[RMDB]
RNA sequence: GGGAACGACUCGAGUAGAGUCGAAAAUGAAAAGUGCCUCGAAAUAAACAUGAAGAUCAAGAACAAGAUACAAUCGGCAAGUAUCGUUCGAUCCAUGAAAUAAACGAGAGCACAAAGCCGAAAAAAAUCUUAAUGAAGAGUUCGCUCUUCAUUAAGAAAAAGAAACAACAACAACAAC
Reactivity to 2A3 in 0.01 (KOAc 150mM, MgCl2 10mM, bicine 150mM(pH8.5), 24C), signal-to-noise 2, nucleotides 027 to 126: u060g000a000a040a000a080g020u000g000c000c000u000c000g020a010a300a300u020a020a020a010c010a010u000g080a170a080g000a020u050c080a110a130g000a010a010c030a120a060g000a010u000a010c020a030a150u100c030g100g020c100a070a110g000u000a000u020c000g000u000u000c000g010a010u000c010c010a010u000g010a300a300a030u030a000a000a000c000g000a010g030a020g010c020a000c000a000a000a020g000c010c000g140a150a110a010a010a000a000a040
Reactivity to DMS in 0.01 (KOAc 150mM, MgCl2 10mM, bicine 150mM(pH8.5), 24C), signal-to-noise 3, nucleotides 027 to 126: u010g010a080a110a170a240g000u000g000c000c000u010c000g050a020a080a070u000a080a180a070c000a010u000g000a160a090g010a050u000c020a100a170g010a020a010c020a100a120g010a010u000a000c000a070a130u000c100g000g010c120a100a100g000u000a000u000c000g000u000u000c020g010a040u010c020c000a000u010g010a010a070a040u010a030a100a050c010g000a010g000a160g000c020a010c000a030a070a150g010c040c020g030a010a010a030a070a090a080a070